[RMDB]
RNA sequence: GGGAACGACUCGAGUAGAGUCGAAAAACGAGGUACGCCUCGAAAAUAUGACCGGUGUCAUAGCCUCUAGCACACAGAGGUCGCGUGGGUUCAACUCCCCCCCUUUUCCGAGGGAAUCGGAAACCAAAAAACACAAUUUGGUUCGCCAAAUUGUGAACUGUCUAACGUUCUUCGGAACGUUAGACAGAAAAGAAACAACAACAACAAC
Reactivity to 2A3 in 0.01 (KOAc 150mM, MgCl2 10mM, bicine 150mM(pH8.5), 24C), signal-to-noise 1, nucleotides 027 to 156: a000c020g000a030g020g020u070a040c190g080c050c010u020c010g000a040a050a020a040u110a090u090g010a010c040c040g090g000u140g040u160c040a040u020a000g010c000c000u000c010u040a050g060c100a030c010a000c000a090g000a000g020g040u040c020g010c030g020u160g080g030g000u110u180c040a040a030c040u050c000c050c000c000c000c000c000u030u130u000u000c000c000g000a000g000g000g000a060a000u010c000g000g010a000a000a000c040c040a040a010a030a060a030a030c000a000c010a020a010u000u010u000g020g010u020u040c130g060c050c000a000a000a000u000u000g010u000g000a000a010